Background: This 207-nucleotide RNA was probed chemically with 2A3.

RNA sequence: GGGAACGACUCGAGUAGAGUCGAAAAUUGGAGAUUUGGACCUUAAGACCAGUGGUGUCAUAGCAGAACCUGAAACUAAGAGGAUUAAGGUAAGAAAGGACCUGCAAACACUUGAUAAACCUGCGGAGAGUGAAUGUAGGAUUGUCUCUGCUGCACAACUCAUGCCGUAUUUCGAUACGGCAUGAGUAAAAGAAACAACAACAACAAC
Reactivity to 2A3 in 0.01 (KOAc 150mM, MgCl2 10mM, bicine 150mM(pH8.5), 24C), signal-to-noise 1, nucleotides 027 to 156: u070u070g030g010a120g100a040u070u010u090g100g070a080c000c020u020u050a080a010g020a050c010c030a020g070u080g170g010u070g120u040c060a100u160a110g080c020a020g030a030a010c030c000u090g000a130a000a040c050u120a300a090g040a010g200g000a000u090u100a020a040g030g010u010a000a060g010a010a100a040g020g000a030c010c010u000g000c000a010a010a020c010a000c040u000u010g020a010u150a010a210a000c000c090u100g000c120g150g060a000g000a010g070u070g010a020a080u000g000u020a050g020g100a040u090u020g040u040c010u000c000u020g040c000u050g040c010a040c030a110

The reactions ran in a buffer of 150 mM KOAc, 10 mM MgCl2 and 150 mM bicine (pH 8.5), at 24 C.
2A3 adducts were read by reverse transcription with SuperScript II with manganese.
It was measured as part of the RMDB library OK3TST.